[RMDB]
RNA sequence: GGGAACGACUCGAGUAGAGUCGAAAAACUAGCUAGUACAUGAUCGUACCUAGUGACAUGCUCCAUGUCACAUGCAUGAGUGUGCUCGAUGAUCCUACCAUGUGCGUCUAGGAUCGCUAGACGAUCCGGCAAUCAGAGGGUUCGCCCUCUGAUUGCCAAAAGAAACAACAACAACAAC
Reactivity to DMS in 0.01 (KOAc 150mM, MgCl2 10mM, bicine 150mM(pH8.5), 24C), signal-to-noise 2, nucleotides 027 to 126: a060c030u000a030g000c200u020a080g030u000a020c000a060u000g000a170u000c070g020u000a060c090c070u000a060g030u000g000a050c020a010u000g020c100u000c130c050a030u000g000u000c000a000c040a100u010g010c040a020u010g000a060g000u000g010u020g000c030u000c190g000a070u020g010a060u000c000c020u020a070c160c040a060u000g020u010g010c130g000u000c040u000a010g000g010a070u000c100g020c020u010a030g000a060c030g010a080u020c070c070
Reactivity to 2A3 in 0.01 (KOAc 150mM, MgCl2 10mM, bicine 150mM(pH8.5), 24C), signal-to-noise 3, nucleotides 027 to 126: a010c050u050a020g100c030u070a010g010u030a020c000a090u190g060a190u260c100g020u000a030c040c030u020a020g020u000g020a010c000a010u040g010c030u070c170c030a020u010g010u040c000a020c010a070u040g060c020a020u030g010a010g040u040g000u030g000c050u080c090g090a130u140g020a060u020c010c010u010a070c010c050a050u090g050u050g100c030g030u000c050u040a060g070g080a300u190c120g010c050u010a020g000a070c010g000a010u040c020c060